Notes:
This 177-nucleotide RNA was probed chemically with DMS and 2A3. It was measured as part of the RMDB library OK1LIB. For DMS the reverse transcriptase was MarathonRT. Reactivities are given for positions 27 through 126. High 2A3 reactivity points to a flexible backbone, as in loops and unpaired stretches. Conditions: 150 mM KOAc, 10 mM MgCl2 and 150 mM bicine (pH 8.5), 24 C.

[RMDB]
RNA sequence: GGGAACGACUCGAGUAGAGUCGAAAAAUGCAGUACCGACGACGUCUGUGACUUGCGGACCGUCAACUGUAGCCAGCUUACCACCAAAGAACGUGAAACGCUUACACAGGCAGUCGACGCCGGCUACCGCGUAAUUUUACUUCGGUAAAAUUACGCGAAAAGAAACAACAACAACAAC
Reactivity to DMS in 0.01 (KOAc 150mM, MgCl2 10mM, bicine 150mM(pH8.5), 24C), signal-to-noise 2, nucleotides 027 to 126: a020u010g000c050a070g050u000a070c190c000g010a060c000g000a070c070g000u000c010u000g000u000g000a130c190u000u030g000c020g000g000a000c010c000g030u000c040a190a070c050u060g000u020a040g020c000c010a040g010c040u000u000a060c020c080a060c080c060a080a110a070g000a040a090c070g000u010g000a140a150a040c070g030c000u000u000a110c050a000c050a070g000g030c040a090g030u000c050g000a060c040g000c090c030g010g020c070u000a060c060
Reactivity to 2A3 in 0.01 (KOAc 150mM, MgCl2 10mM, bicine 150mM(pH8.5), 24C), signal-to-noise 4, nucleotides 027 to 126: a000u080g000c000a000g010u080a110c040c060g010a020c020g000a040c020g050u000c010u030g110u010g130a300c120u100u200g000c000g010g020a010c010c000g000u000c010a050a040c020u030g020u060a020g020c000c030a000g010c010u040u100a030c020c020a030c010c010a140a060a040g070a060a020c020g010u060g110a130a080a010c060g000c020u080u060a010c040a010c010a020g050g000c020a030g010u030c020g010a040c050g040c050c000g020g000c030u050a050c010